About this RNA:
An RNA of 207 nucleotides, treated with 2A3 and DMS and read out base by base. Source: RMDB library OK3TST, as collected in RNAgym. Values cover nucleotides 27 to 156. The 2A3 profile rests on 3,767 reads. For DMS the reverse transcriptase was MarathonRT. The reactions ran in a buffer of 150 mM KOAc, 10 mM MgCl2 and 150 mM bicine (pH 8.5), at 24 C.

[RMDB]
RNA sequence: GGGAACGACUCGAGUAGAGUCGAAAAUUAAGCAGGGGAAGAGCACAGAGGCAUGGAUCAUCCAGCCUGAUACACGUCUCACAGUCAGAAUGGGGAUGAAUCACUCGCCAGUCUCCAGGGGUAAUGUUCACCCAGUUCAAGUACCUUUGAAAUAUGAGAUUAUAGUAAUAUUCGUAUUACUAUAAUCAAAAGAAACAACAACAACAAC
Reactivity to 2A3 in 0.01 (KOAc 150mM, MgCl2 10mM, bicine 150mM(pH8.5), 24C), signal-to-noise 5, nucleotides 027 to 156: u150u070a070a020g020c020a050g020g010g000g000a070a040g010a050g050c070a030c030a050g070a040g030g000c060a100u090g020g020a040u080c020a030u020c040c010a020g060c010c010u010g000a020u060a070c110a010c080g110u030c010u020c040a050c030a030g050u080c010a010g060a100a110u100g010g000g000g060a000u040g030a040a070u060c040a040c070u050c030g030c040c030a030g030u000c010u000c010c020a020g000g020g000g000u040a050a050u090g030u050u040c010a060c010c010c010a020g020u040u050c030a060a010g030u050a080c010c000u050u090u150g090a080a050a060u300a090u220g030a040
Reactivity to DMS in 0.01 (KOAc 150mM, MgCl2 10mM, bicine 150mM(pH8.5), 24C), signal-to-noise 4, nucleotides 027 to 156: u000u020a050a080g010c050a070g010g020g020g000a080a070g020a080g080c030a080c080a090g000a060g020g010c030a060u000g010g010a090u000c030a070u000c020c030a180g000c050c020u000g000a040u010a040c030a060c060g020u000c030u010c030a100c080a150g000u000c060a100g000a080a070u000g020g010g010g000a090u000g010a070a100u010c040a070c040u000c040g000c040c020a120g020u000c010u000c000c030a240g010g020g030g000u010a040a050u000g010u000u000c030a070c030c000c010a160g010u000u010c030a060a110g010u000a060c030c020u000u000u010g010a040a060a090u000a120u010g010a300